An RNA of 207 nucleotides, treated with DMS and 2A3 and read out base by base. For 2A3 the reverse transcriptase was SuperScript II with manganese. Conditions: 150 mM KOAc, 10 mM MgCl2 and 150 mM bicine (pH 8.5), 24 C. For DMS, 4,223 sequencing reads were counted. In probing experiments dimethyl sulfate is read out at A N1 and C N3, which are open when not base-paired.

RNA sequence: GGGAACGACUCGAGUAGAGUCGAAAAUUUAGACUCUCUUUAGGGGUCUGUAGCUGAAGCUUCCAAAUCAAAACUUAAAUAUCUUCCCCUUGACUUCAAUGCUAUAGUUCAGGGACUGGUUUGGACAUUAGGUGACAUCUCUGGAGACCUCAGGGCAUACUAAUCCCUGAUUCGUCAGGGAUUAGUAAAAAGAAACAACAACAACAAC
Reactivity to DMS in 0.01 (KOAc 150mM, MgCl2 10mM, bicine 150mM(pH8.5), 24C), signal-to-noise 2, nucleotides 027 to 156: u000u000u030a080g000a090c010u000c010u010c070u010u010u000a140g010g030g040g050u000c030u000g020u010a070g030c040u010g020a150a160g000c040u010u000c050c030a060a040a050u000c060a050a060a150a090c060u010u000a050a080a120u000a090u010c070u000u010c040c000c000c100u010u000g000a040c030u000u000c070a070a060u010g020c070u010a060u000a050g000u010u000c140a090g020g020g000a070c120u000g020g000u030u000u000g010g010a030c060a050u000u000a080g030g020u000g020a080c070a070u000c050u000c020u000g020g000a080g000a080c060c020u000c030a100g010g030g070c050a270
Reactivity to 2A3 in 0.01 (KOAc 150mM, MgCl2 10mM, bicine 150mM(pH8.5), 24C), signal-to-noise 2, nucleotides 027 to 156: u010u030u010a030g040a050c000u030c000u060c050u120u120u160a030g030g000g040g010u000c040u030g030u040a040g000c030u060g020a060a000g010c050u110u000c020c050a030a030a000u020c010a060a100a060a090c060u190u260a050a130a070u180a220u140c070u080u090c000c000c000c000u040u060g010a000c000u030u060c110a100a260u170g060c000u110a030u090a110g000u000u050c030a020g000g000g030a030c030u030g030g000u000u040u030g010g020a000c000a070u090u160a020g000g020u040g010a010c010a050u030c030u000c010u070g070g000a000g000a040c000c010u030c030a030g000g020g030c010a040